[RMDB]
RNA sequence: GGGAACGACUCGAGUAGAGUCGAAAACUUACAAGGGCACUAAUGCUAUUCAUGAGGGCUCCACCCUCAUGAGCUAAUAAUUACCUCCCCAAAUCUCCACUUCCUAAUACUAUCACACUGGGGUGGGGUGAGAAUUUCAGUGUAUGAAUUUUGGAGGGUAAAACAGGGUAUUCGUACCCUGUUUUACAAAAGAAACAACAACAACAAC
Reactivity to 2A3 in 0.01 (KOAc 150mM, MgCl2 10mM, bicine 150mM(pH8.5), 24C), signal-to-noise 2, nucleotides 027 to 156: c010u230u240a060c060a110a140g070g040g000c030a020c100u170a090a130u090g030c040u080a120u150u050c000a000u010g000a000g000g020g000c070u060c090c040a110c000c010c000u000c000a000u010g000a000g000c000u060a030a100u080a180a100u300u220a140c000c010u030c000c040c020c020a000a160a130u040c020u040c000c000a000c000u200u210c080c020u030a030a070u090a170c050u060a050u300c040a020c030a010c140u120g000g000g000g010u020g000g020g000g000u070g010a080g070a060a060u100u130u130c060a020g020u020g000u120a060u160g050a080a060u030u040u100u100g010g010a000g030g040
Reactivity to DMS in 0.01 (KOAc 150mM, MgCl2 10mM, bicine 150mM(pH8.5), 24C), signal-to-noise 1, nucleotides 027 to 156: c000u010u010a070c080a110a060g010g020g010c040a090c100u000a080a080u010g030c040u000a080u000u010c030a010u000g000a030g010g000g030c000u040c280c130a170c000c000c010u000c010a000u000g020a020g000c130u020a100a150u000a100a090u010u000a060c020c020u000c020c000c040c020a100a180a140u000c000u000c010c010a040c040u000u010c040c060u000a120a050u000a080c070u010a150u010c130a070c090a040c080u030g000g010g040g000u000g000g030g000g000u000g010a140g020a110a050u000u000u000c000a060g020u000g030u000a050u000g030a080a070u000u000u010u000g020g000a090g000g030
The record gives the reactivity of an RNA of 207 nucleotides to 2A3 and DMS. The reactions ran in a buffer of 150 mM KOAc, 10 mM MgCl2 and 150 mM bicine (pH 8.5), at 24 C.